RNA sequence: GGGAACGACUCGAGUAGAGUCGAAAAACACUACUGAGAUGAUAUGGAGAAUACUGAUGGGGAUCUGUAACGUAACACUGUAGGGUAUAUAACACUAUCAUCUAUGUACAAGGUCAGGGGCACCCCUCCAAGUCCAUUAGUCACAGUCCACUGUUUACAUGUUACGUGCUUUCGAGCACGUAACAUGAAAAGAAACAACAACAACAAC
Reactivity to 2A3 in 0.01 (KOAc 150mM, MgCl2 10mM, bicine 150mM(pH8.5), 24C), signal-to-noise 2, nucleotides 027 to 156: a010c080a020c100u080a020c020u050g030a040g000a120u050g020a030u110a040u200g030g000a090g040a180a110u100a130c000u030g010a020u100g000g000g020g010a020u070c030u060g100u070a090a030c080g020u010a050a010c070a000c060u040g050u060a060g070g000g070u020a040u020a020u010a120a030c040a010c050u040a040u080c020a040u040c030u050a080u090g030u020a000c020a090a070g070g040u070c010a010g020g000g020g110c060a060c010c020c010c010u000c090c000a000a000g030u030c000c020a040u020u060a000g020u030c030a000c010a070g020u040c050c030a100c060u050g020u000u030u000a010

An RNA of 207 nucleotides, treated with 2A3 and read out base by base. For 2A3, 1,029 sequencing reads were counted.